The data come from the RNA Mapping Database (RMDB), library TTRINS. This 177-nucleotide RNA was probed chemically with 2A3 and DMS. For DMS the reverse transcriptase was MarathonRT. The DMS profile rests on 3,528 reads. For 2A3, 1,938 sequencing reads were counted. Reactivities are given for positions 27 through 126.
RNA sequence: GGGAACGACUCGAGUAGAGUCGAAAAGAUAUGGACACCUACCCACCUAUAUAGCACUUUGAUCAUAUCUUACUUCGGAAACGAAGUAAGAUAUGGGAGUGCGAAAUAUAGAGGGUGUCCUAAGUCACUAAAGCGUUAAGUUCGCUUAACGCUUUAGAAAAGAAACAACAACAACAAC
Reactivity to 2A3 in 0.01 (KOAc 150mM, MgCl2 10mM, bicine 150mM(pH8.5), 24C), signal-to-noise 1, nucleotides 027 to 126: g020a040u220a170u260g000g010a000c000a000c000c020u300a300c060c100c000a030c020c000u020a010u000a000u030a030g000c020a040c040u180u200u150g230a230u300c050a010u000a010u000c000u000u000a000c000u000u000c000g030g050a090a070a080c040g000a000a000g000u000a000a000g010a000u010a000u000g000g000g000a020g010u000g000c000g000a030a180a000u020a000u000a010g020a050g000g000g000u010g000u010c010c000u000a010a000g030u040c040a020
Reactivity to DMS in 0.01 (KOAc 150mM, MgCl2 10mM, bicine 150mM(pH8.5), 24C), signal-to-noise 3, nucleotides 027 to 126: g020a160u010a100u000g010g010a010c000a000c000c000u000a120c040c020c050a300c270c000u000a000u000a000u000a300g020c000a000c010u010u010u010g030a180u010c000a000u000a000u000c000u000u000a000c000u000u000c000g000g000a070a080a170c010g030a000a000g000u000a010a000g000a000u000a000u000g000g000g000a000g010u000g010c000g000a010a100a050u010a010u000a000g010a160g010g000g030u000g000u000c000c000u000a020a040g000u020c150a290